[RMDB]
RNA sequence: GGGAACGACUCGAGUAGAGUCGAAAACUGGCUCGGAAGGGGGACAGAGUUGACCAUGACAGCGAGUGUGGCCAAGGUGACAGCUGCACGCCCGGAGCCAAGCGCGGCGUGGGCUGAAGCCCGGCGGCCGCAUUUCUAACUUCGGUUAGAAAUGCGGAAAAGAAACAACAACAACAAC
Reactivity to 2A3 in 0.01 (KOAc 150mM, MgCl2 10mM, bicine 150mM(pH8.5), 24C), signal-to-noise 3, nucleotides 027 to 126: c010u010g010g000c010u010c070g070g050a060a010g090g000g020g000g030a020c040a030g100a040g040u030u070g050a060c000c010a020u090g080a050c040a030g000c020g110a020g050u080g030u090g140g000c030c000a110a040g000g000u040g010a020c010a000g030c000u250g060c000a000c030g000c010c000c000g050g040a050g010c030c000a060a020g070c020g020c110g000g000c000g000u010g000g000g000c000u020g000a010a010g000c010c000c030g020g000c010g020g000
Reactivity to DMS in 0.01 (KOAc 150mM, MgCl2 10mM, bicine 150mM(pH8.5), 24C), signal-to-noise 3, nucleotides 027 to 126: c060u020g000g010c070u000c050g000g020a100a080g000g020g000g010g000a010c030a040g000a100g000u020u000g000a080c040c040a090u020g010a120c140a080g000c140g000a060g030u000g010u000g000g000c050c010a110a200g000g000u000g010a300c010a040g000c030u000g010c000a020c000g010c000c010c030g000g020a120g010c090c100a060a060g010c040g010c210g020g000c000g040u000g010g010g000c010u000g000a030a300g000c030c000c090g000g010c120g000g000
Notes
This 177-nucleotide RNA was probed chemically with 2A3 and DMS. For 2A3 the reverse transcriptase was SuperScript II with manganese. DMS (dimethyl sulfate) methylates the pairing face of unpaired adenines and cytosines. Reactivities are given for positions 27 through 126. Source: RMDB libraries RFM100 and RFMREP, as collected in RNAgym.